[RMDB]
RNA sequence: GGGAACGACUCGAGUAGAGUCGAAAAUAGCUGGCAAAUGAAGCAGAAGGCGCUGCUUCUGGGCUUCUCAGAUUUUCCGACUUUGUGCUUCUGUGCUUGUGCUUUUUGCUUAGCUGCUUGCUUGCUGCAGUCGAUCCCUAUUCGUAGGGAUCGACUGAAAAGAAACAACAACAACAAC
Reactivity to 2A3 in 0.01 (KOAc 150mM, MgCl2 10mM, bicine 150mM(pH8.5), 24C), signal-to-noise 5, nucleotides 027 to 126: u130a010g000c000u010g030g000c000a000a030a150u160g010a020a040g000c010a000g020a050a020g090g020c020g010c030u080g010c000u090u010c010u000g020g010g010c050u250u100c020u010c010a050g030a130u040u040u080u070c030c050g040a050c070u060u030u090g080u040g030c000u060u040c030u030g090u030g030c030u060u100g020u020g040c000u060u040u040u030u070g000c020u070u090a050g010c020u010g010c020u070u080g010c010u010u030g010c010u040g010
Reactivity to DMS in 0.01 (KOAc 150mM, MgCl2 10mM, bicine 150mM(pH8.5), 24C), signal-to-noise 1, nucleotides 027 to 126: u030a000g010c020u030g030g000c030a070a060a030u010g020a020a020g010c000a060g010a020a010g000g010c000g040c120u000g000c080u020u010c000u020g000g010g000c080u000u030c010u020c020a060g000a030u010u010u000u000c190c040g000a080c040u000u000u000g000u000g010c050u010u020c000u020g010u010g000c030u020u030g010u020g030c030u010u010u020u000u000g010c030u000u000a030g010c050u010g050c080u000u000g000c040u000u000g030c020u000g000